RNA sequence: GGGAACGACUCGAGUAGAGUCGAAAAGAUAUGGAUCCGUGGAUGAGCUUGGACCUCGGAAACGAGCUAGCUCGCCACCGGAUCCUAAGUCAAAACACCAUAACAUUGUUCGCAAUGUUAUGGUGAAGACAUAUCAGACGUUCGCGUCUGAUAUGUCAAAAGAAACAACAACAACAAC
Reactivity to DMS in 0.01 (KOAc 150mM, MgCl2 10mM, bicine 150mM(pH8.5), 24C), signal-to-noise 4, nucleotides 027 to 126: g000a030u000a290u000g000g000a010u000c010c000g040u000g000g000a060u010g000a020g010c010u000u000g050g020a110c300c010u010c010g010g000a110a090a160c000g000a000g010c020u010a020g020c020u000c000g010c000c000a020c100c090g040g000a000u010c000c000u000a010a060g010u000c040a090a090a140a150c010a010c000c010a000u000a000a000c000a000u000u000g010u010u000c240g010c020a010a000u000g010u000u000a000u000g000g020u000g000a030a070
Reactivity to 2A3 in 0.01 (KOAc 150mM, MgCl2 10mM, bicine 150mM(pH8.5), 24C), signal-to-noise 4, nucleotides 027 to 126: g010a010u070a020u130g000g000a000u000c010c010g000u010g000g120a300u170g020a050g010c040u090u150g090g130a300c050c020u020c010g020g010a060a050a020c000g000a000g000c010u010a000g000c000u000c010g020c010c010a020c030c000g000g000a000u000c010c000u010a010a010g030u010c010a020a040a080a120c000a000c000c000a010u000a010a000c000a010u020u020g030u100u120c300g000c160a000a010u000g010u010u000a000u000g020g000u000g000a000a000
About this RNA: Structure probing data (DMS and 2A3) for a 177-nucleotide construct. Conditions: 150 mM KOAc, 10 mM MgCl2 and 150 mM bicine (pH 8.5), 24 C. DMS adducts were read by reverse transcription with MarathonRT. For 2A3 the reverse transcriptase was SuperScript II with manganese. The 2A3 profile rests on 10,337 reads.